RNA sequence: GGGAACGACUCGAGUAGAGUCGAAAAUCAUUUCCAUGGCCCAAAUCGCUGCGACGGUCCUCGGCAACAAAUCCUGUUCCGGCGGUUCCUAGCUGCCAAUCCUGACGCAUUGGCCACAAGACGCGGCUAUUACUACUACGUUCGCGUAGUAGUAAUAAAAAGAAACAACAACAACAAC
Reactivity to DMS in 0.01 (KOAc 150mM, MgCl2 10mM, bicine 150mM(pH8.5), 24C), signal-to-noise 9, nucleotides 027 to 126: u030c140a110u010u010u010c040c030a080u020g010g000c020c010c030a060a090a060u030c110g020c020u000g000c040g010a140c140g000g010u010c020c010u010c040g010g010c100a060a060c080a040a100a120u030c100c060u010g010u000u000c030c010g010g010c050g000g000u010u010c020c020u020a130g000c050u010g010c010c040a040a050u010c060c030u000g010a090c100g010c100a080u010u000g010g010c000c060a090c120a120a070g000a110c060g010c030g000g000c030
Reactivity to 2A3 in 0.01 (KOAc 150mM, MgCl2 10mM, bicine 150mM(pH8.5), 24C), signal-to-noise 9, nucleotides 027 to 126: u080c010a030u050u050u030c050c030a050u090g100g000c010c000c010a030a090a060u120c060g010c050u050g020c020g030a040c040g020g020u030c000c010u030c010g040g020c030a030a010c020a030a170a050u140c040c050u040g030u050u020c020c010g040g000c060g040g000u070u010c010c000u030a050g020c050u020g010c010c000a010a030u040c010c040u080g050a040c050g020c070a040u040u070g030g010c010c020a060c020a030a030g050a020c040g000c010g040g000c010